Source: RMDB library M2PK50, as collected in RNAgym. This 177-nucleotide RNA was probed chemically with DMS and 2A3. For 2A3, 1,822 sequencing reads were counted. High 2A3 reactivity points to a flexible backbone, as in loops and unpaired stretches. Values cover nucleotides 27 to 126.
[RMDB]
RNA sequence: GGGAACGACUCGAGUAGAGUCGAAAAGUCGCCUCCUUCGGGAGGCGACAAAUACAGAGACUACGCAACUCUGAAAAACACAACAAUAGUGUAAAAGCGUAGAAACAUCCACGUUCGCGUGGAUGAACAGCUAGACUUAGUUCGCUAAGUCUAGCUGAAAAGAAACAACAACAACAAC
Reactivity to DMS in 0.01 (KOAc 150mM, MgCl2 10mM, bicine 150mM(pH8.5), 24C), signal-to-noise 2, nucleotides 027 to 126: g000u000c000g000c000c000u000c010c000u000u020c300g020g010g040a010g000g030c000g000a000c000a000a040a050u020a300c010a010g000a000g010a070c000u000a000c020g010c010a150a050c000u000c000u000g000a040a120a070a200a070c000a010c010a160a160c160a090a160u010a140g000u000g030u000a040a020a080a060g020c000g010u000a010g010a300a100a200c020a020u000c010c000a010c000g010u010u000c220g010c020g030u000g000g000a000u010g000a050a090
Reactivity to 2A3 in 0.01 (KOAc 150mM, MgCl2 10mM, bicine 150mM(pH8.5), 24C), signal-to-noise 2, nucleotides 027 to 126: g000u000c000g010c030c000u020c030c000u050u080c160g140g030g000a000g050g040c050g000a000c010a000a030a000u030a000c000a000g010a000g060a070c000u000a000c000g000c070a180a090c020u000c000u000g050a110a010a000a020a010c050a050c040a180a030c040a120a220u070a250g000u020g000u100a020a070a020a050g010c020g000u010a010g010a000a050a010c020a010u000c000c030a010c010g010u020u030c170g010c010g070u000g030g010a000u000g000a030a020